Conditions: 150 mM KOAc, 10 mM MgCl2 and 150 mM bicine (pH 8.5), 24 C. This 177-nucleotide RNA was probed chemically with DMS and 2A3. For 2A3, 1,216 sequencing reads were counted. For DMS, 2,366 sequencing reads were counted. Reactivities are rounded to 0.1 and cut off at 0 and 3.

RNA sequence: GGGAACGACUCGAGUAGAGUCGAAAAUUGUUAUAAAGUGUGUUAAUGGUGGUACCGCUGCAUAACUUACUCCUAAAAAAUCAAUGCCCGUAUAUUGGCGUUCAUUCGCCCAUCUUUGUCUAACAUCUGAAUCUCUAGGAUUCGUCCUAGAGAUUCAAAAAGAAACAACAACAACAAC
Reactivity to DMS in 0.01 (KOAc 150mM, MgCl2 10mM, bicine 150mM(pH8.5), 24C), signal-to-noise 3, nucleotides 027 to 126: u010u010g000u000u000a050u000a100a210a060g020u000g000u010g000u000u010a120a100u000g000g040u000g010g010u000a050c040c020g000c040u000g000c300a020u000a020a050c040u000u000a050c110u000c060c030u030a010a040a080a070a060a070u030c080a040a040u020g000c010c030c040g010u000a080u010a140u010u000g000g020c010g020u010u000c220a140u010u000c080g010c010c000c130a040u000c040u010u000u000g020u010c060u000a070a100c150a060u000c130
Reactivity to 2A3 in 0.01 (KOAc 150mM, MgCl2 10mM, bicine 150mM(pH8.5), 24C), signal-to-noise 2, nucleotides 027 to 126: u080u030g030u050u060a070u060a160a210a050g020u050g030u020g000u100u070a120a090u140g100g000u050g050g020u060a020c020c020g010c000u000g000c000a010u000a070a010c000u040u070a080c040u020c000c030u090a070a100a060a010a020a020u110c050a050a060u070g040c010c010c000g060u090a080u010a070u200u100g020g000c000g010u030u020c020a070u120u040c010g030c010c010c000a000u030c030u060u070u090g030u070c060u070a050a040c040a150u100c040